[RMDB]
RNA sequence: GGGAACGACUCGAGUAGAGUCGAAAACCGACAUUCGUGUCGGAUCUUGGGGUCAACAAGAAGUCAUACUACCCACCGAACUACUCCUGAAGCCUCCACGGGAGCGAGGUAUGUCACUUGUUGACGGAGGCACCCUGCUAGCCGUAUUCGUACGGAAAUUAGGUCACAGUUUCGACUGUGACCUAAUAAAAGAAACAACAACAACAAC
Reactivity to 2A3 in 0.01 (KOAc 150mM, MgCl2 10mM, bicine 150mM(pH8.5), 24C), signal-to-noise 3, nucleotides 027 to 156: c000c000g000a000c000a050u100u130c240g130u060g010u050c010g000g050a120u070c130u140u260g120g000g020g010u000c000a010a010c000a010a040g140a160a060g200u230c050a060u110a180c020u070a050c030c020c110a050c050c060g050a160a070c070u160a060c020u160c020c000u010g020a050a010g000c020c000u000c010c010a030c010g000g000g000a020g010c050g050a160g000g040u050a090u300g120u130c040a010c060u040u010g000u010u000g010a020c020g000g000a000g000g000c020a010c010c010c000u060g090c100u130a030g040c010c000g000u020a050u080u080c250g040u050a030c010g010g000a060a100
Reactivity to DMS in 0.01 (KOAc 150mM, MgCl2 10mM, bicine 150mM(pH8.5), 24C), signal-to-noise 2, nucleotides 027 to 156: c020c010g010a000c010a130u000u010c300g050u000g010u000c000g010g010a030u000c040u030u010g020g000g060g000u000c020a010a030c000a030a010g060a160a110g070u020c150a200u000a070c030u010a030c030c040c060a300c110c060g040a060a160c060u010a050c020u000c020c020u000g000a070a160g030c000c000u000c010c020a300c020g030g000g000a030g000c020g020a070g000g000u010a010u000g000u010c080a200c010u000u010g050u000u000g010a050c000g000g010a030g130g100c000a120c030c030c070u000g020c040u000a120g010c000c000g020u000a150u000u010c180g000u000a060c000g010g010a050a130